An RNA of 207 nucleotides, treated with DMS and 2A3 and read out base by base. For DMS the reverse transcriptase was MarathonRT. It was measured as part of the RMDB library OK3TST. The RNA was probed in 150 mM KOAc, 10 mM MgCl2 and 150 mM bicine (pH 8.5) at 24 C. For 2A3 the reverse transcriptase was SuperScript II with manganese.
RNA sequence: GGGAACGACUCGAGUAGAGUCGAAAAGAUGCGCGUGGUCGACGCCUUCCAGAUCGUGCCGGCCUUCCUGCUUGCCCUCGCCUUCGUCAGCAGCAUCGGGGUGUCGACCCCGAUCGUCGUGCUUGCCAUCGCGCUCGGCGCCUGGGCCGAUCCGGCGUACUAACUUUAACUUCGGUUAAAGUUAGUAAAAAGAAACAACAACAACAAC
Reactivity to DMS in 0.01 (KOAc 150mM, MgCl2 10mM, bicine 150mM(pH8.5), 24C), signal-to-noise 3, nucleotides 027 to 156: g020a070u000g010c050g020c030g070u000g030g020u010c010g020a070c020g020c040c030u020u010c060c070a270g010a070u010c050g030u000g050c020c030g030g000c050c060u000u000c020c030u000g000c050u010u000g030c010c010c020u000c030g000c030c040u000u000c050g010u000c070a070g030c020a080g000c030a070u000c000g020g020g010g020u000g050u010c170g000a100c000c020c000c010g010a020u010c050g020u000c040g010u000g010c020u000u000g020c020c030a090u000c010g010c050g020c050u000c040g010g010c020g020c050c030u000g010g020g010c020c040g000a070u010c030c020g030g020c060g040
Reactivity to 2A3 in 0.01 (KOAc 150mM, MgCl2 10mM, bicine 150mM(pH8.5), 24C), signal-to-noise 6, nucleotides 027 to 156: g040a040u140g020c030g000c020g050u070g010g090u080c060g030a050c020g010c010c010u120u050c080c040a080g010a170u100c100g060u130g040c020c010g020g000c010c030u080u090c020c020u060g040c070u060u110g010c020c010c010u020c020g000c010c020u060u100c030g070u050c030a010g000c010a000g020c010a030u010c000g020g000g000g010u080g170u080c070g150a210c000c000c000c000g010a020u030c030g050u050c030g050u030g020c010u010u080g010c010c010a090u070c060g000c010g020c040u030c030g030g000c030g020c030c050u090g010g020g000c000c010g030a020u020c020c030g010g030c020g010